[RMDB]
RNA sequence: GGGAACGACUCGAGUAGAGUCGAAAACAAAUGCUCUUCUUUGUGCUACUUGCCCCUUUGCUAAGGGUGAUAGCUGUUCUUCUAAUUGCAAACAUUCAGUUGCUCAGUUGGUUAGUUACCUUUCUGAAAGGUGCACGGUUCGCCGUGCACAAAAGAAACAACAACAACAAC
Reactivity to 2A3 in 0.01 (KOAc 150mM, MgCl2 10mM, bicine 150mM(pH8.5), 24C), signal-to-noise 2, nucleotides 027 to 129: c000a000a120a020u050g070c000u000c000u070u020c000u040u020u090g030u000g000c030u030a090c020u000u090g020c000c000c000c000u000u230u210g040c110u120a000a000g000g000g000u080g040a070u000a080g000c030u030g000u220u000c060u060u010c000u040a000a000u120u100g070c080a050a050a000c020a010u010u080c070a000g140u000u020g030c000u030c040a070g010u020u020g120g060u050u130a020g000u030u020a010c030c000u050u020u000c010u020g000a010a010a010g030
Reactivity to DMS in 0.01 (KOAc 150mM, MgCl2 10mM, bicine 150mM(pH8.5), 24C), signal-to-noise 3, nucleotides 027 to 129: c080a040a020a070u030g040c110u020c060u040u000c030u000u000u000g050u020g030c060u040a020c180u040u010g010c050c060c090c020u000u010u020g000c100u050a150a150g010g060g080u100g020a010u010a060g020c010u030g050u040u060c020u000u000c050u150a090a070u000u050g030c090a020a100a070c210a120u050u040c140a050g010u050u010g000c070u010c120a000g010u000u060g010g020u040u020a080g010u000u000a010c050c040u030u050u050c080u070g020a050a020a050g010
This 170-nucleotide RNA was probed chemically with 2A3 and DMS. The reactions ran in a buffer of 150 mM KOAc, 10 mM MgCl2 and 150 mM bicine (pH 8.5), at 24 C. Reactivities are rounded to 0.1 and cut off at 0 and 3. The data come from the RNA Mapping Database (RMDB), library 15KLIB. The DMS profile rests on 7,740 reads.